[RMDB]
RNA sequence: GGGAACGACUCGAGUAGAGUCGAAAAACAUGAAUUGACCCAGGCCAUGGGGGCAUUGGUUGGCCUCCUCUGUAAGGUAGGCGUGGGGCUCAGCCUGCAAGAGCUGACCAUACUUAUGUAGGAUUAGCCUAGCGAUCCUAUUCGUAGGAUCGCUAGGAAAAGAAACAACAACAACAAC
Reactivity to 2A3 in 0.01 (KOAc 150mM, MgCl2 10mM, bicine 150mM(pH8.5), 24C), signal-to-noise 1, nucleotides 027 to 126: a000c080a070u210g160a150a140u240u100g060a020c020c000c010a000g120g020c060c010a050u080g000g000g000g070g020c000a020u040u300g300g030u090u150g090g000c010c050u000c050c020u090c020u100g120u130a110a080g090g120u080a010g000g070c080g070u020g000g060g020g000c050u010c020a010g030c040c000u080g120c050a110a020g000a000g060c060u050g100a060c000c000a040u110a160c040u150u040a040u180g010u030a020g000g050a070u090u120a000g000
Reactivity to DMS in 0.01 (KOAc 150mM, MgCl2 10mM, bicine 150mM(pH8.5), 24C), signal-to-noise 2, nucleotides 027 to 126: a110c090a110u010g020a080a100u000u010g020a080c010c010c020a040g000g010c040c020a120u000g000g000g010g000g000c060a070u000u020g010g020u000u000g010g000c000c000u000c020c010u000c070u010g000u010a110a060g030g030u000a030g000g000c040g020u020g000g000g000g000c070u000c050a080g000c020c010u010g000c050a090a250g020a040g000c010u000g000a110c060c040a100u010a060c060u020u010a060u000g020u000a050g000g010a160u000u010a100g020

Notes: The record gives the reactivity of an RNA of 177 nucleotides to 2A3 and DMS. Values cover nucleotides 27 to 126. The reactions ran in a buffer of 150 mM KOAc, 10 mM MgCl2 and 150 mM bicine (pH 8.5), at 24 C. Source: RMDB library OK2TRN, as collected in RNAgym. DMS adducts were read by reverse transcription with MarathonRT. The 2A3 profile rests on 776 reads.